[RMDB]
RNA sequence: GGGAACGACUCGAGUAGAGUCGAAAAUGAACACGCUGCUGCUGGACAAGACCGGCACCAUCACCCUCGGUAACCGGCAGGCCACCGAGUUCGUGCCGAUCAACGGUGUGAGUGCCGAGGCGGUCGCGCCUAGAGGCACGUUCGCGUGCCUCUAGGCAAAAGAAACAACAACAACAAC
Reactivity to DMS in 0.01 (KOAc 150mM, MgCl2 10mM, bicine 150mM(pH8.5), 24C), signal-to-noise 2, nucleotides 027 to 126: u020g000a090a130c070a100c120g010c030u000g020c050u010g010c020u010g000g000a110c200a090a040g000a190c110c010g010g000c030a010c030c050a060u000c060a020c090c080c020u000c210g000g000u000a080a050c000c020g000g000c060a100g010g010c050c040a080c090c040g010a100g010u010u010c070g010u000g020c000c030g030a030u010c080a050a190c260g020g000u000g020u000g000a130g000u000g000c010c010g010a110g000g020c110g030g000u000c130g020c160
Reactivity to 2A3 in 0.01 (KOAc 150mM, MgCl2 10mM, bicine 150mM(pH8.5), 24C), signal-to-noise 2, nucleotides 027 to 126: u110g000a020a030c070a010c100g010c000u040g000c030u020g020c000u050g050g110a060c050a130a020g070a040c010c000g000g030c010a000c000c030a030u100c010a020c030c010c000u010c030g000g000u010a060a030c010c010g020g010c050a030g000g050c040c010a160c090c080g050a100g070u130u150c080g020u070g000c000c000g000a050u080c040a040a080c040g000g000u010g020u040g040a150g010u070g020c000c010g010a020g000g010c020g000g050u050c050g010c010